[RMDB]
RNA sequence: GGGAACGACUCGAGUAGAGUCGAAAAGCAUACGUUCGCGUAUGCAAAAAGCGUACUACAAGGCAACAGCCCUGUCGAUGAUGACCGCUUCCCAAAUAGGAAGCGCAAGUCGGCAGGGACAUGCCUUGUAUCGCAAAAACACGGCUUCGGCCGUGAACAUGAGCAGCCAAUUCGUUGGCUGCUCAUGAAAAGAAACAACAACAACAAC
Reactivity to 2A3 in 0.01 (KOAc 150mM, MgCl2 10mM, bicine 150mM(pH8.5), 24C), signal-to-noise 1, nucleotides 027 to 156: g020c000a000u000a000c000g060u030u180c300g000c000g120u000a000u000g000c040a000a000a000a140a000g040c030g030u120a030c050u000a050c020a040a000g000g000c030a060a000c060a300g080c030c020c000u010g010u000c000g000a010u020g020a090u210g010a090c130c030g030c020u040u020c020c020c010a110a120a040u260a040g000g000a000a000g000c000g000c040a260a000g000u000c000g000g000c000a000g000g020g010a000c000a010u000g000c000c000u000u000g000u000a030u000c000g000c000a010a010a010a010a010c000a000c000g000g020c000u050u000c270g130g000c000c010g000u090g010a010a000
An RNA of 207 nucleotides, treated with 2A3 and read out base by base. It was measured as part of the RMDB library RNAMAK. Values are in units of 0.01, from 0 to 300, in steps of 10. 2A3 is a SHAPE reagent: it acylates the 2'-hydroxyl of flexible nucleotides of all four kinds. The reactions ran in a buffer of 150 mM KOAc, 10 mM MgCl2 and 150 mM bicine (pH 8.5), at 24 C.